Structure probing data (2A3 and DMS) for a 177-nucleotide construct. The DMS profile rests on 1,299 reads. It was measured as part of the RMDB library OK2TST. In probing experiments dimethyl sulfate is read out at A N1 and C N3, which are open when not base-paired. Values cover nucleotides 27 to 126. For 2A3, 1,496 sequencing reads were counted.

RNA sequence: GGGAACGACUCGAGUAGAGUCGAAAAGCGGCAGUUUGCCCGACAACUGCUGUGGCAACGGCCGGAAUGGGCCGCUCAGUUGGCGGUGAUGAUGGUCGUGAACCCGCAGCAACGCCGCGAUGAGCGACGUAGGCUCCGUAUUCGUACGGAGCCUACGAAAAGAAACAACAACAACAAC
Reactivity to 2A3 in 0.01 (KOAc 150mM, MgCl2 10mM, bicine 150mM(pH8.5), 24C), signal-to-noise 2, nucleotides 027 to 126: g000c000g010g000c010a070g000u080u150u150g070c000c000c000g040a050c040a110a030c030u040g000c000u020g030u020g030g000c010a030a000c000g000g020c030c050g030g050a020a010u040g080g300g010c020c010g030c040u110c060a300g060u300u300g120g000c040g000g000u000g010a010u010g000a000u020g000g000u000c010g000u030g000a000a010c000c000c010g000c000a000g000c000a000a030c010g010c000c000g010c010g000a160u150g080a030g100c070g130a080
Reactivity to DMS in 0.01 (KOAc 150mM, MgCl2 10mM, bicine 150mM(pH8.5), 24C), signal-to-noise 2, nucleotides 027 to 126: g020c000g010g000c000a100g030u000u000u000g020c030c000c000g060a080c090a170a120c080u000g020c000u010g000u000g010g030c170a300a000c000g000g000c000c010g010g000a230a000u000g030g020g000c000c000g000c040u000c060a250g020u000u000g000g020c010g000g030u010g000a010u000g010a300u020g010g020u000c000g010u020g010a100a150c290c010c010g000c010a030g010c020a040a040c070g000c040c000g010c010g010a130u000g000a120g030c200g010a160